Structure probing data (DMS and 2A3) for a 177-nucleotide construct.
RNA sequence: GGGAACGACUCGAGUAGAGUCGAAAAAGAACCAUAAGCAUUUAUGCUUGAGAAAAUAACAUCAUUGUGUUUGUCAUCAUCAGGUUUUAAUAGUCUAAAACAUCAAUUUAAAACACAAAUCUUGAUGCAAUAAGACACACUUCGGUGUGUCUUAUUGAAAAGAAACAACAACAACAAC
Reactivity to DMS in 0.01 (KOAc 150mM, MgCl2 10mM, bicine 150mM(pH8.5), 24C), signal-to-noise 3, nucleotides 027 to 126: a110g010a200a180c050c010a130u030a040a010g040c000a040u020u000u010a060u030g010c000u000u000g010a190g000a070a040a080a060u020a050a210c030a020u000c060a050u010u010g010u010g010u000u000u000g000u000c170a050u000c140a080u000c160a090g020g010u010u000u000u000a000a070u000a130g010u010c170u000a020a050a050a050c010a040u000c090a070a060u010u000u000a040a020a030a020c010a020c050a010a020a050u000c060u010u000g020a040u000g020
Reactivity to 2A3 in 0.01 (KOAc 150mM, MgCl2 10mM, bicine 150mM(pH8.5), 24C), signal-to-noise 2, nucleotides 027 to 126: a010g060a100a030c020c000a000u040a150a030g000c000a000u050u200u260a080u300g000c000u050u070g030a060g080a140a180a040a100u200a100a030c000a000u050c000a020u040u110g040u040g010u040u020u130g070u060c000a040u000c000a000u080c130a110g010g120u050u000u000u020a080a130u070a090g060u000c070u150a000a000a040a000c010a050u110c080a090a020u090u200u290a000a020a020a000c000a000c000a030a020a040u060c070u060u030g010a000u040g000
2A3 adducts were read by reverse transcription with SuperScript II with manganese. Reactivities are rounded to 0.1 and cut off at 0 and 3.